[RMDB]
RNA sequence: GGGAACGACUCGAGUAGAGUCGAAAACAUGACCUGUUCGCAGGUCAUGAAAGUGGACGAGGAGCGAUGAACCCACACAAAACAUGACAUCGCAAAAUAAAAAAAGCAAGUGCUUCGGCACUUGCAAGUUAACUAUCUCCUUCGGGAGAUAGUUAACAAAAGAAACAACAACAACAAC
Reactivity to DMS in 0.01 (KOAc 150mM, MgCl2 10mM, bicine 150mM(pH8.5), 24C), signal-to-noise 2, nucleotides 027 to 126: c020a010u000g000a000c000c000u000g000u000u020c130g000c000a000g020g020u000c000a000u010g010a050a080a080g010u000g000g000a160c190g010a190g030g000a100g000c020g000a020u000g000a130a120c110c010c000a030c020a110c160a160a060a040a050c080a080u010g000a220c020a010u000c030g010c020a110a050a060a120u020a050a030a050a050a050a120a120g000c010a000a030g000u000g010c010u000u010c110g020g000c000a000c000u000u000g010c000a010a050
Reactivity to 2A3 in 0.01 (KOAc 150mM, MgCl2 10mM, bicine 150mM(pH8.5), 24C), signal-to-noise 3, nucleotides 027 to 126: c000a000u000g000a000c000c020u000g020u040u050c210g020c080a000g010g000u000c000a000u000g000a020a010a010g030u010g030g030a040c090g030a100g160g120a200g040c010g000a010u020g020a080a110c010c040c000a000c000a010c010a020a090a020a010c030a060u080g070a020c000a010u000c020g020c010a000a020a080a050u170a020a040a020a000a000a000a000g000c000a000a000g000u000g000c010u060u110c230g060g000c000a000c000u000u000g000c000a010a000
Structure probing data (DMS and 2A3) for a 177-nucleotide construct. 2A3 is a SHAPE reagent: it acylates the 2'-hydroxyl of flexible nucleotides of all four kinds. The RNA was probed in 150 mM KOAc, 10 mM MgCl2 and 150 mM bicine (pH 8.5) at 24 C. For 2A3 the reverse transcriptase was SuperScript II with manganese. It was measured as part of the RMDB library M2PK50.